[RMDB]
RNA sequence: GGGAACGACUCGAGUAGAGUCGAAAAGCGCACCUGUAAUCGCAAUGACAGGUAUGCGUUCAGCAUAUGAACCUGCGAUACCGUUGACGGCACUUAAUUCGCCAACACCAAAUGUAGUAACUAAUGCCUGGGGAUGUGAUUUCGAUCACAUCCCCAGAAAAGAAACAACAACAACAAC
Reactivity to DMS in 0.01 (KOAc 150mM, MgCl2 10mM, bicine 150mM(pH8.5), 24C), signal-to-noise 1, nucleotides 027 to 126: g000c100g060c060a000c080c000u000g000u000a220a100u000c240g000c080a140a070u000g000a000c000a000g000g000u000a000u000g000c010g010u000u000c000a100g050c110a000u110a070u000g020a120a040c040c000u000g100c000g000a000u000a110c120c000g100u000u010g130a180c100g000g020c000a120c110u000u000a020a250u000u140c100g000c000c000a070a050c000a000c000c160a150a020a120u000g020u000a200g140u010a050a020c020u000a010a040u000g010c120
Reactivity to 2A3 in 0.01 (KOAc 150mM, MgCl2 10mM, bicine 150mM(pH8.5), 24C), signal-to-noise 3, nucleotides 027 to 126: g000c040g000c000a000c010c000u000g040u080a080a150u220c110g000c190a070a070u180g050a080c010a030g020g080u010a100u050g010c000g020u080u110c080a020g030c050a120u080a030u200g040a020a110c000c000u050g000c000g000a020u030a150c060c020g040u000u190g090a060c010g000g030c020a000c060u080u130a010a080u220u060c070g000c060c030a050a040c030a020c010c000a140a150a090u120g000u030a080g040u040a070a060c060u050a030a070u080g060c020
The record gives the reactivity of an RNA of 177 nucleotides to DMS and 2A3. The RNA was probed in 150 mM KOAc, 10 mM MgCl2 and 150 mM bicine (pH 8.5) at 24 C. For DMS, 768 sequencing reads were counted. The data come from the RNA Mapping Database (RMDB), library OK1LIB.